The data come from the RNA Mapping Database (RMDB), library OK1LIB. The record gives the reactivity of an RNA of 177 nucleotides to DMS and 2A3. The reactions ran in a buffer of 150 mM KOAc, 10 mM MgCl2 and 150 mM bicine (pH 8.5), at 24 C. For DMS, 54,608 sequencing reads were counted. DMS adducts were read by reverse transcription with MarathonRT. Values are in units of 0.01, from 0 to 300, in steps of 10. Reactivities are given for positions 27 through 126. For 2A3, 32,142 sequencing reads were counted.

[RMDB]
RNA sequence: GGGAACGACUCGAGUAGAGUCGAAAAGCACCUGUCCAGGGCCAGCAGCUCAAUGAAAUGGCGAACAUUGGAGGUCAGGAUUACAGUAUUUGCUUCUUCCUGUUUGGCUGUUUGGUAGCAUCAGCUGCUAUAAGCAAAACUUCGGUUUUGCUUAUAGAAAAGAAACAACAACAACAAC
Reactivity to DMS in 0.01 (KOAc 150mM, MgCl2 10mM, bicine 150mM(pH8.5), 24C), signal-to-noise 9, nucleotides 027 to 126: g010c060a100c180c000u000g010u010c030c040a110g010g000g020c030c020a080g010c090a080g010c050u020c060a060a060u020g010a050a070a060u010g000g010c070g000a080a110c040a060u010u010g000g010a100g000g010u010c060a050g000g010a120u020u020a080c100a050g010u020a090u030u010u020g010c030u010u000c090u000u000c010c020u000g010u010u020u020g000g000c020u000g000u010u010u010g000g000u010a060g000c060a090u020c090a050g000c030u000g010
Reactivity to 2A3 in 0.01 (KOAc 150mM, MgCl2 10mM, bicine 150mM(pH8.5), 24C), signal-to-noise 9, nucleotides 027 to 126: g020c010a030c030c010u020g030u020c020c020a070g000g040g000c010c000a020g010c020a010g010c030u050c110a050a100u120g070a090a050a070u110g080g020c040g030a080a020c030a070u070u130g070g030a050g010g060u050c030a020g010g030a040u070u140a070c040a040g080u090a170u090u180u190g030c010u020u040c000u050u020c010c000u030g070u060u070u080g090g000c020u010g040u110u090u060g090g020u070a040g040c020a040u100c060a030g010c010u040g000